[RMDB]
RNA sequence: GGGAACGACUCGAGUAGAGUCGAAAACGAGAGGUCUGGGUAAUCCUUUAAUACUCAUCGUGCUGGGGAUUGAUUCUUGUAAUUAUUAAUCAUGAACGAGGAAUUCCUAGUAAACGCAAGUCAUCAUUUAUUCAUAAAUGUUCGCAUUUAUGAAUAAAAAAGAAACAACAACAACAAC
Reactivity to DMS in 0.01 (KOAc 150mM, MgCl2 10mM, bicine 150mM(pH8.5), 24C), signal-to-noise 8, nucleotides 027 to 126: c030g000a090g010a050g010g010u000c100u000g000g000g020u020a110a120u020c030c020u010u010u020a060a070u020a080c030u000c020a090u010c050g010u000g000c030u000g000g010g000g010a060u000u010g000a060u000u010c010u010u000g010u000a100a060u040u060a120u010u010a060a070u000c100a030u010g000a190a170c050g000a030g010g010a080a090u000u000c000c010u000a060g010u010a040a090a080c110g000c240a050a070g000u010c080a090u010c080a070u000
Reactivity to 2A3 in 0.01 (KOAc 150mM, MgCl2 10mM, bicine 150mM(pH8.5), 24C), signal-to-noise 9, nucleotides 027 to 126: c040g010a030g010a020g070g040u050c050u060g020g010g020u070a080a130u150c010c000u080u090u130a080a050u070a040c010u000c030a120u060c050g020u020g010c000u010g000g000g000g010a010u010u040g070a080u080u050c010u010u020g030u030a120a060u040u140a090u100u140a100a080u110c080a060u090g070a050a020c020g010a030g010g020a010a010u010u010c000c000u000a010g010u050a040a160a030c040g010c080a060a030g060u070c020a060u010c010a020u080